[RMDB]
RNA sequence: GGGAACGACUCGAGUAGAGUCGAAAACUUUCCUUCUACCUGUGUCUGAGGUCCUCUGGUCGGGGACUGCGCGCGUCUUCCCAGGUCAGGGAGGAGGGGUCGGGGCGACCUGAGAAAGACACAACGAAGCGAAUGGAGCCCCUGAAUGGGGAAAGGGCAUUGGAAAGGUGUUCGCACCUUUCCAAUGAAAAGAAACAACAACAACAAC
Reactivity to 2A3 in 0.01 (KOAc 150mM, MgCl2 10mM, bicine 150mM(pH8.5), 24C), signal-to-noise 1, nucleotides 027 to 156: c020u000u030u020c010c000u010u010c040u060a070c010c010u010g020u010g030u010c010u060g060a040g030g100u060c050c010u080c000u030g030g040u050c050g020g000g090g070a110c040u080g000c040g020c010g000c040g200u000c050u050u010c000c020c000a020g130g110u110c080a050g030g020g060a060g030g000a070g040g020g020g040u040c060g000g000g040g080c050g000a000c000c010u030g010a010g030a040a090a000g010a000c020a010c020a010a030c010g010a020a010g010c020g080a010a010u090g060g010a060g050c040c000c000c000u170g170a240a130u200g060g000g000g000a000a050a050g040g030g050